[RMDB]
The record gives the reactivity of an RNA of 177 nucleotides to DMS and 2A3. DMS adducts were read by reverse transcription with MarathonRT. For DMS, 11,771 sequencing reads were counted. Conditions: 150 mM KOAc, 10 mM MgCl2 and 150 mM bicine (pH 8.5), 24 C. For 2A3 the reverse transcriptase was SuperScript II with manganese.
RNA sequence: GGGAACGACUCGAGUAGAGUCGAAAAGCCGGCCGCAACCAUGAAGGCGGCGAAGACGAUGUUAUAGCCGUUCAGAAUCCAGGACAGGCUCCCGAUGUCGUAGGACGGGAAGGAACGCUGGAUAUCCCCGAGGAAAAUAUUUCGAUAUUUUCCUCGGAAAAGAAACAACAACAACAAC
Reactivity to DMS in 0.01 (KOAc 150mM, MgCl2 10mM, bicine 150mM(pH8.5), 24C), signal-to-noise 5, nucleotides 027 to 126: g000c020c020g000g010c020c030g000c050a120a070c120c140a120u030g000a170a100g010g010c010g000g010c010g010a100a100g010a040c070g000a080u020g010u010u020a100u030a150g020c050c010g010u010u020c050a110g000a130a050u020c020c010a050g000g000a150c040a100g000g000c050u000c020c010c010g020a140u040g010u000c040g020u040a120g020g000a050c010g000g000g010a060a060g020g010a090a060c060g000c020u010g000g000a040u010a100u010c040c140
Reactivity to 2A3 in 0.01 (KOAc 150mM, MgCl2 10mM, bicine 150mM(pH8.5), 24C), signal-to-noise 9, nucleotides 027 to 126: g010c000c010g070g070c000c010g020c060a100a150c060c020a070u220g090a130a050g070g000c010g000g010c010g020a080a030g030a010c050g040a040u120g080u120u080a090u110a090g030c020c010g030u050u030c020a050g060a060a020u000c010c000a010g000g070a070c060a090g060g080c010u010c000c000c000g080a140u200g080u170c070g070u140a090g070g120a030c000g010g000g010a030a040g020g020a120a060c020g010c010u000g000g010a020u030a110u110c050c020